Source: RMDB library OK2TST, as collected in RNAgym. An RNA of 177 nucleotides, treated with DMS and read out base by base.
RNA sequence: GGGAACGACUCGAGUAGAGUCGAAAAGCCGGACGCACGGUACAGGGUGCGAGUACGCUGACGCAACAGCUGGUGAAAAACCUGUUCCUCUCCAGCGAGCGUUCUUACUGGCGUAAAGCGAACGAAGCGGGUGUAUGACUUUCGAGUCAUACACCCGAAAAGAAACAACAACAACAAC
Reactivity to DMS in 0.01 (KOAc 150mM, MgCl2 10mM, bicine 150mM(pH8.5), 24C), signal-to-noise 1, nucleotides 027 to 126: g030c030c020g000g050a300c040g000c070a060c030g000g000u000a070c180a120g030g010g010u000g000c000g030a110g010u000a040c020g000c010u010g060a060c070g030c070a100a130c120a160g010c000u000g000g000u010g000a030a040a170a120a060c060c110u000g000u000u000c010c030u000c030u000c010c010a030g000c000g010a170g000c020g010u000u000c120u010u030a070c080u020g000g010c010g000u000a060a080a030g000c070g040a120a060c060g000a140a120g060
The RNA was probed in 150 mM KOAc, 10 mM MgCl2 and 150 mM bicine (pH 8.5) at 24 C.